Conditions: 150 mM KOAc, 10 mM MgCl2 and 150 mM bicine (pH 8.5), 24 C.
This 177-nucleotide RNA was probed chemically with DMS and 2A3.
Values cover nucleotides 27 to 126.
Source: RMDB library OK1LIB, as collected in RNAgym.
RNA sequence: GGGAACGACUCGAGUAGAGUCGAAAAGCUGUUUCGCGAUCACCUUCAACGCUAUCCUCCCCUGCUUUGGGCUCGAGCACGCUGCCUGCACCAGGGGUGGUGUCCGCCGUGCUCCGAUGCCGUGCUCACUCCACCCAUCAUUCGUGAUGGGUGGAGUAAAAGAAACAACAACAACAAC
Reactivity to DMS in 0.01 (KOAc 150mM, MgCl2 10mM, bicine 150mM(pH8.5), 24C), signal-to-noise 2, nucleotides 027 to 126: g000c010u000g000u000u010u030c030g020c000g020a100u000c070a030c000c030u000u000c040a050a120c060g010c020u010a020u040c030c000u000c030c000c010c040u010g000c020u000u020u030g000g010g000c040u010c030g000a040g000c020a020c040g000c170u030g020c060c110u060g010c030a070c080c010a130g060g060g030g000u000g020g000u000g020u000c160c300g000c030c020g000u000g000c000u000c040c050g000a030u020g000c020c030g010u000g000c080u000c090
Reactivity to 2A3 in 0.01 (KOAc 150mM, MgCl2 10mM, bicine 150mM(pH8.5), 24C), signal-to-noise 5, nucleotides 027 to 126: g040c040u020g020u050u080u080c060g010c040g050a050u070c020a040c030c010u070u090c080a100a040c040g020c030u040a070u100c000c020u020c000c010c000c000u040g010c030u090u090u150g070g010g000c010u030c030g010a010g010c000a010c020g050c090u090g000c000c010u030g020c020a030c010c010a040g070g010g020g130u040g010g000u010g030u030c030c030g010c010c010g010u010g020c010u010c030c060g040a030u190g010c030c010g020u040g000c020u020c010